[RMDB]
RNA sequence: GGGAACGACUCGAGUAGAGUCGAAAAGCAAUUACAGUUCUUUACCUAGAAAACGUUGAACAAUGAAAUUGAGUAUGAGGCAUCGGAUCCAUUGUUAGAAACCCUUAUAUGGCUUAUAAAAGUUACCCCAAACCUACGUUUUCGAACGUAGGUUUGGAAAAGAAACAACAACAACAAC
Reactivity to DMS in 0.01 (KOAc 150mM, MgCl2 10mM, bicine 150mM(pH8.5), 24C), signal-to-noise 1, nucleotides 027 to 126: g000c050a070a050u010u010a160c160a120g040u000u000c010u000u010u000a110c060c050u000a190g000a040a060a080a080c080g010u010u000g000a000a070c020a040a090u000g000a010a040a120u020u010g000a000g020u000a070u000g000a070g000g000c040a070u000c070g000g030a100u000c080c010a030u000u000g000u000u000a080g000a100a080a030c060c060c020u000u000a060u010a130u020g000g000c040u010u000a050u010a090a100a080a090g010u000u000a050c130c120